[RMDB]
RNA sequence: GGGAACGACUCGAGUAGAGUCGAAAAGUAAUAGAUAUCAGGAUGACGAGAAAGGGUGCGCUGAUAUCCUGGACGAAUGCUAGCAGUAAAUAGAAUAGCGCUCCUAAUACAACUAGCAACAAAAGGAUAAGGUAUCGUGAUGUCAAUCACAUUGCGACCUAGUGCCUGAUUUCGAUCAGGCACUAGGAAAAGAAACAACAACAACAAC
Reactivity to 2A3 in 0.01 (KOAc 150mM, MgCl2 10mM, bicine 150mM(pH8.5), 24C), signal-to-noise 2, nucleotides 027 to 156: g010u010a010a080u050a080g030a050u060a040u090c030a030g040g000a060u070g030a040c040g060a020g070a110a120a060g050g010g010u060g010c040g010c020u020g060a030u020a010u100c010c000u000g010g020a060c070g000a100a010u050g020c030u000a010g000c060a020g020u120a030a080a200u040a050g080a060a050u050a060g010c010g020c010u030c010c010u050a090a020u130a020c000a060a080c010u000a010g000c000a000a080c000a040a080a000a010g000g000a010u020a040a040g090g010u060a010u110c010g000u010g000a000u010g030u040c070a060a080u130c020a040c000a030u010u070g010c000g000a030
Reactivity to DMS in 0.01 (KOAc 150mM, MgCl2 10mM, bicine 150mM(pH8.5), 24C), signal-to-noise 1, nucleotides 027 to 156: g010u000a140a120u000a090g040a090u010a070u000c010a060g000g010a120u010g000a200c080g010a260g000a040a080a190g020g010g070u040g000c000g010c070u020g010a110u030a040u000c000c000u000g010g010a300c160g010a080a090u000g020c010u010a040g020c040a200g040u010a040a040a240u020a070g010a080a150u000a150g000c060g030c040u160c040c010u000a080a110u000a060c030a060a030c000u000a000g000c000a040a210c040a040a070a130a090g010g020a040u000a090a040g020g000u000a070u000c000g030u000g000a030u010g000u010c040a120a080u010c120a100c030a110u000u000g010c000g000a120